[RMDB]
RNA sequence: GGGAACGACUCGAGUAGAGUCGAAAAGCGUACUACGUUCCAGGUUAGACAUGGCUACGGUAGCUGUAUCCCAAAUAGGAUACAGCAAACGUAGCCAACAGCUAAUAUUGGGAACGUAUCGCAAAUACAACGUGAUUGUUCGCAAUCACGUUGUAAAGAUUCCACAAGACUUCGGUCUUGUGGAAUCAAAAGAAACAACAACAACAAC
Reactivity to DMS in 0.01 (KOAc 150mM, MgCl2 10mM, bicine 150mM(pH8.5), 24C), signal-to-noise 1, nucleotides 027 to 156: g060c010g010u010a010c160u000a030c000g010u010u010c000c000a180g020g020u000u000a030g000a040c050a300u000g000g000c000u000a000c000g010g010u000a300g030c000u010g020u000a000u000c000c000c010a010a160a200u000a090g000g010a060u000a010c000a000g030c020a000a010a170c010g030u000a010g040c000c020a000a030c070a200g000c000u000a010a030u000a200u010u050g050g020g020a000a010c040g000u000a020u000c000g000c030a140a100a150u000a000c000a000a000c010g020u000g000a030u000u000g000u050u020c300g050c020a010a010u000c000a010c000g010u010u000g000u000a000a020a120
Reactivity to 2A3 in 0.01 (KOAc 150mM, MgCl2 10mM, bicine 150mM(pH8.5), 24C), signal-to-noise 2, nucleotides 027 to 156: g010c010g040u070a080c070u010a010c020g000u000u000c020c050a040g040g040u000u020a020g000a130c080a130u080g020g000c000u010a010c020g010g090u100a020g000c010u000g010u000a000u040c010c020c010a170a150a040u300a060g000g000a000u000a010c000a000g000c000a000a040a000c000g000u000a000g000c000c000a000a000c000a000g000c000u020a000a010u100a250u120u180g110g020g000a000a000c000g000u030a040u200c000g000c000a020a030a000u030a000c000a000a000c000g000u000g000a000u000u020g100u060u110c300g010c210a000a000u000c000a000c000g000u000u000g000u000a000a000a000
The record gives the reactivity of an RNA of 207 nucleotides to DMS and 2A3.
Values cover nucleotides 27 to 156.
For DMS, 2,036 sequencing reads were counted.
Source: RMDB library RNAMAK, as collected in RNAgym.
Conditions: 150 mM KOAc, 10 mM MgCl2 and 150 mM bicine (pH 8.5), 24 C.
2A3 adducts were read by reverse transcription with SuperScript II with manganese.